[RMDB]
RNA sequence: GGGAACGACUCGAGUAGAGUCGAAAAGCAGUCCGACUUGGGUCACUGCGAACACGACAGGGCUGGAGUGUCACCUGGAGUGGAUUAGGACGGACUACUCCGUCUUGGGACAGUAGGACGUCCGAAAGGCAAGCAGCACCUUCGGGUGUUGCUUGCCAAAAGAAACAACAACAACAAC
Reactivity to DMS in 0.01 (KOAc 150mM, MgCl2 10mM, bicine 150mM(pH8.5), 24C), signal-to-noise 2, nucleotides 027 to 126: g020c010a040g000u020c090c070g000a060c070u000u010g000g000g010u000c030a080c000u000g000c020g010a110a080c040a040c080g000a140c030a050g010g030g000c040u020g000g000a090g010u000g000u030c000a130c050c070u000g000g020a230g010u000g000g030a040u000u000a110g020g020a020c030g010g000a020c050u020a040c020u000c130c140g000u020c060u050u020g010g020g010a020c120a050g000u000a010g000g000a010c000g000u020c000c000g000a040a060a090
Reactivity to 2A3 in 0.01 (KOAc 150mM, MgCl2 10mM, bicine 150mM(pH8.5), 24C), signal-to-noise 3, nucleotides 027 to 126: g000c010a000g030u160c010c000g070a300c300u190u290g000g010g010u060c030a000c000u000g000c010g000a010a010c020a010c000g040a010c000a010g000g030g020c050u110g070g010a160g050u110g030u110c030a050c090c000u000g000g000a030g000u000g070g050a040u090u060a050g000g010a000c010g000g000a010c030u020a000c030u050c040c010g080u090c160u040u090g020g040g000a030c050a030g020u010a020g000g000a000c000g000u000c000c000g020a020a010a000
Conditions: 150 mM KOAc, 10 mM MgCl2 and 150 mM bicine (pH 8.5), 24 C. Chemical mapping of a 177-nucleotide RNA with DMS and 2A3. It was measured as part of the RMDB library OK1LIB. DMS adducts were read by reverse transcription with MarathonRT.